[RMDB]
RNA sequence: GGGAACGACUCGAGUAGAGUCGAAAACAGUCAAGGUGAAGGCGGGCCAGACCAUCGCCGCAUUCUACCAGAGCACCGUCAUGAUCUUUGGCACGAUGGCUCGCUACAUGCUGAGAGUUAGGGAAAAAUCAUCAGGUCCAUUCGUGGACCUGAUGAUAAAAGAAACAACAACAACAAC
Reactivity to DMS in 0.01 (KOAc 150mM, MgCl2 10mM, bicine 150mM(pH8.5), 24C), signal-to-noise 2, nucleotides 027 to 126: c080a140g030u010c070a020a090g010g000u000g010a110a080g010g000c030g000g000g010c030c020a090g030a110c090c040a070u000c070g020c050c030g000c110a020u000u000c050u000a060c030c030a090g010a030g020c080a050c030c020g010u000c060a110u030g000a030u000c050u010u000u000g010g000c030a090c220g010a100u000g000g010c030u010c030g000c050u010a130c070a060u020g060c020u000g030a170g000a060g000u000u010a110g010g000g000a010a040a090a070
Reactivity to 2A3 in 0.01 (KOAc 150mM, MgCl2 10mM, bicine 150mM(pH8.5), 24C), signal-to-noise 1, nucleotides 027 to 126: c030a000g060u050c020a020a100g110g000u060g070a110a050g060g020c020g000g000g050c020c020a030g000a040c000c120a050u060c070g070c050c000g030c020a000u070u000c000u080a130c060c070a010g000a010g060c040a060c130c040g060u060c040a100u070g090a040u010c020u080u040u080g010g000c070a020c020g070a080u060g000g000c000u000c030g050c010u030a070c020a050u150g040c020u060g000a030g000a010g080u080u100a080g050g000g000a000a100a020a000
Chemical mapping of a 177-nucleotide RNA with DMS and 2A3. Conditions: 150 mM KOAc, 10 mM MgCl2 and 150 mM bicine (pH 8.5), 24 C.